Source: RMDB library OK2TST, as collected in RNAgym. The record gives the reactivity of an RNA of 177 nucleotides to DMS and 2A3. Reactivities are given for positions 27 through 126. 2A3 adducts were read by reverse transcription with SuperScript II with manganese.
RNA sequence: GGGAACGACUCGAGUAGAGUCGAAAACGCGAGUAUCAUGUAGUAGCGCUUGGCGAUGGGUUUGAGGCGAUCGAGUUUAAUGAUGGCUUCGCGAUAGAGAGCAUGAAUAAUGGCAAUGAUUGCCGCGUAGAGUUUAAAAUUUCGAUUUUAAACUCUAAAAAGAAACAACAACAACAAC
Reactivity to DMS in 0.01 (KOAc 150mM, MgCl2 10mM, bicine 150mM(pH8.5), 24C), signal-to-noise 9, nucleotides 027 to 126: c050g010c030g000a110g020u000a040u000c050a060u000g000u000a090g010u000a110g020c100g010c050u000u010g010g020c070g010a070u000g010g010g010u000u000u010g010a070g010g020c020g010a040u000c030g010a150g010u010u000u010a100a110u010g010a040u000g000g010c020u000u000c030g010c080g010a100u000a070g010a120g010a080g010c020a060u000g000a100a110u010a070a090u000g000g000c030a050a100u010g010a100u000u000g030c020c010g020c200g010
Reactivity to 2A3 in 0.01 (KOAc 150mM, MgCl2 10mM, bicine 150mM(pH8.5), 24C), signal-to-noise 6, nucleotides 027 to 126: c020g010c010g020a030g040u050a020u100c030a020u090g040u100a060g020u020a010g060c020g010c070u010u050g050g010c020g050a060u060g010g000g100u030u110u190g030a020g030g000c030g030a020u030c020g020a030g060u130u160u240a130a080u140g030a010u040g060g000c000u040u040c020g000c020g040a010u060a010g050a000g000a000g010c010a030u080g060a100a020u220a100a060u090g050g000c020a010a030u060g070a080u070u100g010c030c000g000c000g020